[RMDB]
RNA sequence: GGGAACGACUCGAGUAGAGUCGAAAACCGGAUAUGGUCGUUUUGAAUAUCAAGAGUAUCCGUGACGAGACAACGUUAGGGCAUUUGUGUCAUAUCGAUUAUGAUGAUUACACGACUCCCCUAGUAGGCGUAGCAUUUUGUUCGCAAAAUGCUACGCAAAAGAAACAACAACAACAAC
Reactivity to 2A3 in 0.01 (KOAc 150mM, MgCl2 10mM, bicine 150mM(pH8.5), 24C), signal-to-noise 1, nucleotides 027 to 126: c000c020g000g000a020u020a030u110g080g040u010c020g000u000u070u070u170g060a120a040u110a060u200c050a080a050g000a000g070u010a000u030c050c010g050u140g020a060c090g060a020g020a060c050a100a020c120g050u080u040a030g000g000g000c010a000u020u000u060g050u010g000u030c010a000u010a000u000c060g100a150u190u160a080u300g040a000u050g010a040u000u040a010c000a000c000g010a000c000u000c000c000c040c000u020a040g040u010a060g170
Reactivity to DMS in 0.01 (KOAc 150mM, MgCl2 10mM, bicine 150mM(pH8.5), 24C), signal-to-noise 2, nucleotides 027 to 126: c110c000g010g010a050u010a030u000g020g000u020c030g000u000u000u000u000g020a160a160u000a030u010c030a040a150g000a060g000u000a010u000c010c000g040u000g040a080c060g010a130g010a090c080a070a040c080g000u040u000a050g020g000g030c250a090u010u000u020g000u000g000u020c160a040u010a030u000c030g000a150u010u010a090u010g010a080u000g010a050u010u010a030c030a020c000g000a020c060u020c300c010c000c020u000a030g000u020a090g010
An RNA of 177 nucleotides, treated with 2A3 and DMS and read out base by base. The data come from the RNA Mapping Database (RMDB), library OK2TRN. Values cover nucleotides 27 to 126.